An RNA of 177 nucleotides, treated with 2A3 and DMS and read out base by base. It was measured as part of the RMDB library OK2TST. For 2A3 the reverse transcriptase was SuperScript II with manganese. DMS adducts were read by reverse transcription with MarathonRT. The reactions ran in a buffer of 150 mM KOAc, 10 mM MgCl2 and 150 mM bicine (pH 8.5), at 24 C.

[RMDB]
RNA sequence: GGGAACGACUCGAGUAGAGUCGAAAACGGGCGGUCUUCAUCAGGGCGCCCAUCAUCCGCGCGGUGGGACCCGGAGUCGAGGUGCUCGCCUGGUUCGAAGACCUUCCCAUCCUGGUGCGCCGGGGACCACUUCUAACGGUUUCGACCGUUAGAAGUGAAAAGAAACAACAACAACAAC
Reactivity to 2A3 in 0.01 (KOAc 150mM, MgCl2 10mM, bicine 150mM(pH8.5), 24C), signal-to-noise 4, nucleotides 027 to 126: c060g000g030g000c020g010g050u010c010u010u020c010a050u030c020a030g040g030g020c080g060c070c040c000a020u010c000a000u010c000c040g070c030g000c080g010g040u080g020g050g050a090c020c060c010g030g000a030g040u160c140g070a100g090g050u120g060c060u060c060g080c000c010u020g000g030u040u080c060g030a020a010g010a020c000c000u100u160c030c020c000a020u050c010c000u040g040g060u080g040c130g020c030c030g000g010g010g020a020c050
Reactivity to DMS in 0.01 (KOAc 150mM, MgCl2 10mM, bicine 150mM(pH8.5), 24C), signal-to-noise 5, nucleotides 027 to 126: c180g000g010g020c300g010g000u010c000u010u000c030a040u000c080a080g000g000g010c090g010c000c010c000a010u010c030a050u010c040c060g000c090g010c120g000g000u000g010g000g000a170c030c050c080g010g000a040g020u000c040g000a090g010g030u010g010c060u010c080g000c020c010u010g010g020u000u020c120g010a050a030g000a030c030c020u000u000c000c000c000a180u010c010c000u000g020g010u010g010c070g020c020c030g020g010g010g010a140c180